[RMDB]
Chemical mapping of a 177-nucleotide RNA with 2A3 and DMS.
RNA sequence: GGGAACGACUCGAGUAGAGUCGAAAAGGAUGCUCGUUCGCGAGCAUCCACUGAGAUAGCCACUAUAAAGAUUAAGUCUUCCUACUGGAGACAGGAUGUCUAUGCUCCUGGCCUUCGGGCCAGGAAAGUGAAUUAGUAUCUUCGGAUACUAAUUCACAAAAGAAACAACAACAACAAC
Reactivity to 2A3 in 0.01 (KOAc 150mM, MgCl2 10mM, bicine 150mM(pH8.5), 24C), signal-to-noise 7, nucleotides 027 to 126: g000g000a010u000g010c010u000c010g030u070u080c260g010c010g090a000g010c000a000u000c000c000a010c010u060g020a030g020a060u070a030g040c040c020a050c050u100a080u120a300a210a030g070a070u110u170a120a040g010u010c020u060u050c030c050u140a300c160u240g020g010a020g010a020c010a010g100g050a050u100g030u020c020u070a070u110g080c010u020c010c000u010g000g000c000c000u010u030c220g030g010g000c010c000a000g000g000a000a000a000
Reactivity to DMS in 0.01 (KOAc 150mM, MgCl2 10mM, bicine 150mM(pH8.5), 24C), signal-to-noise 5, nucleotides 027 to 126: g010g010a010u000g010c000u000c000g020u000u010c220g030c010g020a010g010c000a020u000c000c000a020c100u000g010a150g000a100u000a060g020c030c040a050c120u000a090u010a060a110a100g000a110u000u000a070a130g010u000c010u000u000c000c120u010a100c190u010g000g000a040g000a040c010a030g010g010a070u010g010u000c020u000a080u010g000c120u000c000c000u000g000g000c010c000u010u010c140g030g010g010c010c000a000g000g000a000a000a060
Conditions: 150 mM KOAc, 10 mM MgCl2 and 150 mM bicine (pH 8.5), 24 C. For DMS, 5,629 sequencing reads were counted. The data come from the RNA Mapping Database (RMDB), library M2PK50.